[RMDB]
RNA sequence: GGGAACGACUCGAGUAGAGUCGAAAACAUCUGAUUUAGUAAUCUUGCGCAAUUGUUUUUUUACAGUUUCGGCAAAUGGUGCCAAGCAAUAAAUAUGACUAUGCUCAAACUGAAUUAAUGGUGGGUGCAUUCCCUACGCUUUCGAGCGUAGGGAAUGAAAAGAAACAACAACAACAAC
Reactivity to DMS in 0.01 (KOAc 150mM, MgCl2 10mM, bicine 150mM(pH8.5), 24C), signal-to-noise 2, nucleotides 027 to 126: c030a030u010c040u040g000a040u000u000u000a050g040u000a080a060u020c200u000u000g010c080g010c060a060a100u030u000g000u000u000u000u050u000u120u000a010c130a060g000u000u000u000c170g010g040c040a010a180a100u000g060g050u010g000c030c020a040a030g050c010a090a030u010a040a040a030u020a020u020g000a010c080u000a070u020g010c070u010c020a000a060a100c040u000g010a020a010u000u060a030a030u010g000g030u010g000g000g000u030g000
Reactivity to 2A3 in 0.01 (KOAc 150mM, MgCl2 10mM, bicine 150mM(pH8.5), 24C), signal-to-noise 7, nucleotides 027 to 126: c000a050u010c010u090g050a050u020u050u020a040g030u080a090a150u090c070u040u070g000c030g000c040a100a270u090u100g070u050u000u020u010u000u020u050a080c090a030g000u000u020u080c050g020g000c040a080a110a210u240g200g040u050g030c020c010a030a040g030c020a040a130u120a160a050a020u200a090u160g020a010c010u040a030u090g000c000u010c060a010a030a090c020u040g020a020a050u050u070a110a090u140g030g000u010g010g040g020u080g020